Chemical mapping of a 177-nucleotide RNA with 2A3 and DMS.
For 2A3 the reverse transcriptase was SuperScript II with manganese.
The 2A3 profile rests on 4,696 reads.
RNA sequence: GGGAACGACUCGAGUAGAGUCGAAAAGAGAGGAUUGUGCACCCGGCAGCCCGCUCCCUGGAUCUGCAUUUUGGGGCUCCAGGGCGCGUGGAGCUGCGCUGUGAGGUGGCCCCAGCUGGGUCUCAGGCGCAUAAAACAUUUUCGAAUGUUUUAUGCGAAAAGAAACAACAACAACAAC
Reactivity to 2A3 in 0.01 (KOAc 150mM, MgCl2 10mM, bicine 150mM(pH8.5), 24C), signal-to-noise 3, nucleotides 027 to 126: g080a000g020a030g020g080a140u110u170g040u080g060c020a030c010c010c000g040g020c010a020g010c000c000c000g000c010u000c000c020c000u000g020g000a030u040c020u100g230c150a110u160u180u220u300g080g020g020g000c000u010c010c010a000g020g030g000c000g000c010g030u140g030g000a070g010c010u020g000c040g030c040u010g080u080g110a160g020g020u020g040g000c020c000c000c000a030g040c030u070g030g000g060u010c010u010c040a030g080g010
Reactivity to DMS in 0.01 (KOAc 150mM, MgCl2 10mM, bicine 150mM(pH8.5), 24C), signal-to-noise 4, nucleotides 027 to 126: g000a120g000a090g010g010a110u010u010g010u010g010c030a050c020c010c030g010g020c020a040g010c020c040c010g000c010u000c000c000c010u000g000g000a010u000c030u000g010c040a230u000u010u010u010g020g000g000g010c040u000c000c000a010g000g000g010c070g000c010g020u000g020g010a110g020c020u000g000c020g020c130u010g020u010g010a100g000g020u000g010g000c030c030c010c030a120g010c060u000g010g000g000u000c010u000c040a140g000g010